[RMDB]
This 207-nucleotide RNA was probed chemically with DMS and 2A3. For 2A3 the reverse transcriptase was SuperScript II with manganese. The DMS profile rests on 2,920 reads. The reactions ran in a buffer of 150 mM KOAc, 10 mM MgCl2 and 150 mM bicine (pH 8.5), at 24 C. For 2A3, 1,078 sequencing reads were counted. Values cover nucleotides 27 to 156.

RNA sequence: GGGAACGACUCGAGUAGAGUCGAAAAGUCACCCAAUUGCGAGCCUACAUUGACACUUUUGGUAGCCGGCCUGCUAAUUUACGCGGCUGGUUGCUGUUUUCUAAUUCCAAUUAUUUCCUUAGUGAGAUGGAGCUUAUUUUUGGUCGCCGGGGUGGUAACCCUAGACGAGAUUCGUCUCGUCUAGGGUAAAAGAAACAACAACAACAAC
Reactivity to DMS in 0.01 (KOAc 150mM, MgCl2 10mM, bicine 150mM(pH8.5), 24C), signal-to-noise 1, nucleotides 027 to 156: g000u000c010a030c000c000c060a030a100u010u010g030c050g030a110g010c050c030u010a040c090a090u010u000g020a180c070a090c020u000u020u000u020g020g020u000a040g000c000c030g030g000c010c000u030g100c020u000a150a140u010u000u000a090c050g030c000g030g000c000u000g000g050u000u000g020c000u000g020u000u000u000u010c040u010a070a140u020u000c050c050a060a120u000u000a130u010u000u000c020c020u000u010a050g040u000g030a300g010a060u000g000g000a110g000c050u000u010a090u000u000u000u020u000g010g000u010c060g040c050c050g000g000g010g030u010g020g030u020a080
Reactivity to 2A3 in 0.01 (KOAc 150mM, MgCl2 10mM, bicine 150mM(pH8.5), 24C), signal-to-noise 3, nucleotides 027 to 156: g020u020c020a000c000c000c000a090a130u100u110g000c020g010a060g080c060c030u140a120c100a170u100u170g070a050c020a070c090u070u110u170u300g010g000u020a010g020c000c000g010g030c020c000u050g020c010u040a170a300u250u160u100a090c150g000c000g040g010c030u020g000g000u000u000g000c000u000g000u030u040u090u110c050u050a080a070u070u060c000c020a020a080u080u080a080u090u180u080c040c030u120u120a010g030u110g190a040g000a020u040g000g000a010g000c020u110u080a150u210u110u050u160u070g000g000u000c010g000c020c010g030g000g000g030u010g020g030u070a050